[RMDB]
RNA sequence: GGGAACGACUCGAGUAGAGUCGAAAAAUGCAGAGGGUGACAUUUACAGGCGUUUUGGCUCCUCUGUGGUGGAUCUUAGAGCACACCGCAUCUUACGUGCUAGAGUGCCCCUCAGUGGCUAUGGGGGCGAAAAUCGCCCUUUCGAGGGCGAUUUUCGAAAAGAAACAACAACAACAAC
Reactivity to DMS in 0.01 (KOAc 150mM, MgCl2 10mM, bicine 150mM(pH8.5), 24C), signal-to-noise 2, nucleotides 027 to 126: a050u020g020c010a070g050a010g000g000g030u010g010a040c020a050u030u000u000a100c090a160g030g050c140g000u030u020u010u010g000g000c000u000c000c000u000c020u000g000u000g010g030u010g020g000a070u020c060u000u000a080g000a160g000c240a070c050a030c120c100g000c020a020u000c090u000u020a070c170g000u000g010c010u040a090g000a090g020u000g030c040c010c000c010u000c130a090g020u020g010g000c130u040a030u030g000g000g020g000g000
Reactivity to 2A3 in 0.01 (KOAc 150mM, MgCl2 10mM, bicine 150mM(pH8.5), 24C), signal-to-noise 2, nucleotides 027 to 126: a000u230g040c050a000g040a000g040g070g100u020g010a070c020a080u120u100u080a190c080a020g090g170c150g190u060u050u140u010g090g000c010u110c000c000u000c070u020g010u030g060g060u050g010g040a090u040c060u100u100a080g000a030g030c110a000c000a050c090c010g000c010a000u050c050u050u120a000c030g010u020g070c020u000a070g040a000g030u040g010c000c000c000c000u010c010a090g060u100g090g060c000u010a060u110g000g000g000g000g000
Structure probing data (DMS and 2A3) for a 177-nucleotide construct. Conditions: 150 mM KOAc, 10 mM MgCl2 and 150 mM bicine (pH 8.5), 24 C. Reactivities are rounded to 0.1 and cut off at 0 and 3. DMS adducts were read by reverse transcription with MarathonRT. The 2A3 profile rests on 590 reads. It was measured as part of the RMDB library OK1LIB.